[RMDB]
RNA sequence: GGGAACGACUCGAGUAGAGUCGAAAAGUGGAUAGUUUCGACUAUCCACACAACUGAUGAUCUUACAGUGGUGGAUGAAGAAGAUGGCCAUCGGAUCCUCAAAUAGCACAGAGUUCGCUCUGUGCAAGCAUAUAAGGCCAUUCGUGGCCUUAUAUGCAAAAGAAACAACAACAACAAC
Reactivity to 2A3 in 0.01 (KOAc 150mM, MgCl2 10mM, bicine 150mM(pH8.5), 24C), signal-to-noise 7, nucleotides 027 to 126: g000u000g000g000a000u010a000g010u000u030u140c170g030a020c020u000a000u000c010c000a000c000a000c000a010a020c030u060g010a040u030g010a010u030c010u040u220a090c050a110g060u070g090g050u040g030g060a090u100g070a090a160g050a060a010g050a090u140g070g000c020c000a020u030c010g010g020a020u020c010c010u040c030a080a100a100u150a050g000c000a000c000a000g000a000g010u050u080c160g050c070u000c000u000g000u000g000c000a000a000
Reactivity to DMS in 0.01 (KOAc 150mM, MgCl2 10mM, bicine 150mM(pH8.5), 24C), signal-to-noise 4, nucleotides 027 to 126: g020u000g010g000a020u000a000g000u000u000u010c200g010a040c000u000a010u000c000c000a000c000a030c170a070a060c090u010g010a070u000g010a050u000c030u000u010a110c140a100g000u010g030g010u000g020g010a070u010g000a080a110g000a130a050g000a070u010g000g010c080c020a020u000c030g000g000a060u000c010c050u000c160a040a080a070u020a110g010c000a010c000a010g010a010g010u000u010c200g020c000u000c010u000g000u000g000c010a000a040

Structure probing data (2A3 and DMS) for a 177-nucleotide construct. The RNA was probed in 150 mM KOAc, 10 mM MgCl2 and 150 mM bicine (pH 8.5) at 24 C. Values cover nucleotides 27 to 126. For 2A3, 12,204 sequencing reads were counted. Reactivities are rounded to 0.1 and cut off at 0 and 3.